Chemical mapping of a 207-nucleotide RNA with 2A3. The reactions ran in a buffer of 150 mM KOAc, 10 mM MgCl2 and 150 mM bicine (pH 8.5), at 24 C.
[RMDB]
RNA sequence: GGGAACGACUCGAGUAGAGUCGAAAAGAUAAGCUAGCAGCAAAAAGGAACCGAUUCCCACCAAGUUCGGAAAGAGAUACCGGGCGAGGCGCUGACGAAAGAAUCUCGCUUCAGACACCCCAAGGACAUGACCUUAAAAUGUUCGCAUUUUAAGGAACCCUUAUUUAUGCUUCGGCAUAAAUAAGGGAAAAGAAACAACAACAACAAC
Reactivity to 2A3 in 0.01 (KOAc 150mM, MgCl2 10mM, bicine 150mM(pH8.5), 24C), signal-to-noise 1, nucleotides 027 to 156: g000a060u130a030a030g020c040u100a030g000c050a010g000c040a030a030a100a170a100g070g030a030a010c020c060g080a100u050u010c010c000c010a010c020c040a020a030g000u020u040c030g000g100a150a090a100g120a040g000a050u080a100c010c050g030g010g000c000g010a010g030g000c050g000c040u030g020a060c000g020a040a030a210g040a030a020u040c010u030c110g000c000u030u000c030a080g060a180c000a120c050c010c010c000a010a070g090g010a010c010a080u130g060a050c010c000u000u000a000a000a000a000u010g010u030u020c090g040c030a000u000u000u000u000a000a000g000g010a000a010